RNA sequence: GGGAACGACUCGAGUAGAGUCGAAAAGAUAUGGAUGAGGCUUUUGACGAGUCGUUGUUCGGAAACGAACAACACUCGAUAAGCCUAUCCUAAGUCAAAUCGGAGAAAGCUUCGGCUUUCUCCGAAACUACUGGUAAGGGUUCGCCCUUACCAGUAGAAAAGAAACAACAACAACAAC
Reactivity to DMS in 0.01 (KOAc 150mM, MgCl2 10mM, bicine 150mM(pH8.5), 24C), signal-to-noise 3, nucleotides 027 to 126: g000a050u020a300u010g010g010a010u000g010a010g030g010c000u000u000u010u000g020a180c140g000a000g000u000c210g010u000u000g010u000u010c000g000g000a100a100a160c000g020a010a010c010a000a010c010a010c000u000c000g020a050u000a010a030g000c000c000u000a040u000c010c000u000a040a150g000u000c040a070a110a140u000c000g000g000a030g010a010a020a000g010c000u000u010c260g030g010c000u000u010u000c000u000c010c010g000a000a010a080
Reactivity to 2A3 in 0.01 (KOAc 150mM, MgCl2 10mM, bicine 150mM(pH8.5), 24C), signal-to-noise 4, nucleotides 027 to 126: g030a020u110a040u140g010g020a030u130g300a050g010g000c020u030u120u200u270g240a170c070g010a010g000u060c070g000u130u010g000u000u000c000g010g050a050a090a090c010g000a000a000c000a000a010c000a000c000u000c010g010a010u030a020a000g020c010c000u010a000u010c000c000u000a130a030g030u020c040a040a040a210u030c000g010g010a020g020a000a000a000g010c070u150u220c300g030g000c000u000u010u000c010u020c000c000g000a000a000a000
Chemical mapping of a 177-nucleotide RNA with DMS and 2A3. In probing experiments dimethyl sulfate is read out at A N1 and C N3, which are open when not base-paired. The DMS profile rests on 3,176 reads. The data come from the RNA Mapping Database (RMDB), library TTRDEL. Values cover nucleotides 27 to 126. DMS adducts were read by reverse transcription with MarathonRT. High 2A3 reactivity points to a flexible backbone, as in loops and unpaired stretches.